[RMDB]
RNA sequence: GGGAACGACUCGAGUAGAGUCGAAAAUUGAAGUUAGUUUGGUAUUCGUUGGAUCAGCUUCACAAGGAGUGUAUUCUGAUGAUAAGCAAGUCAACAUCAAUCUAUGAGUGUCGGAGAAGGGUUUUGAAUAGACUUGUAUAUUCGUAUACAAGUCUAUAAAAGAAACAACAACAACAAC
Reactivity to 2A3 in 0.01 (KOAc 150mM, MgCl2 10mM, bicine 150mM(pH8.5), 24C), signal-to-noise 5, nucleotides 027 to 126: u020u010g030a040a000g030u010u040a030g030u040u070u060g120g070u070a100u050u090c060g010u020u030g010g020a020u020c040a040g030c010u050u010c050a080c060a200a070g030g010a020g020u050g020u090a110u100u010c020u030g010a040u020g010a020u030a080a030g080c010a010a010g040u090c020a010a020c000a030u000c010a030a040u000c010u070a090u090g060a030g060u060g030u050c040g020g030a060g030a110a060g090g010g000u020u040u080u070g010a020
Reactivity to DMS in 0.01 (KOAc 150mM, MgCl2 10mM, bicine 150mM(pH8.5), 24C), signal-to-noise 9, nucleotides 027 to 126: u010u000g010a050a090g010u000u000a060g020u000u000u000g010g010u000a120u000u000c040g030u000u000g010g010a040u000c190a160g010c030u000u000c020a090c290a120a150g000g000a030g010u000g010u000a100u010u000c020u000g010a020u000g000a040u010a110a150g000c040a020a030g000u000c040a020a040c040a060u000c030a030a040u000c070u000a070u010g010a100g010u000g010u000c040g010g000a060g010a080a080g000g000g010u000u000u000u000g010a080

Structure probing data (2A3 and DMS) for a 177-nucleotide construct. The RNA was probed in 150 mM KOAc, 10 mM MgCl2 and 150 mM bicine (pH 8.5) at 24 C. Source: RMDB library RFMREP, as collected in RNAgym. 2A3 adducts were read by reverse transcription with SuperScript II with manganese. The DMS profile rests on 19,971 reads.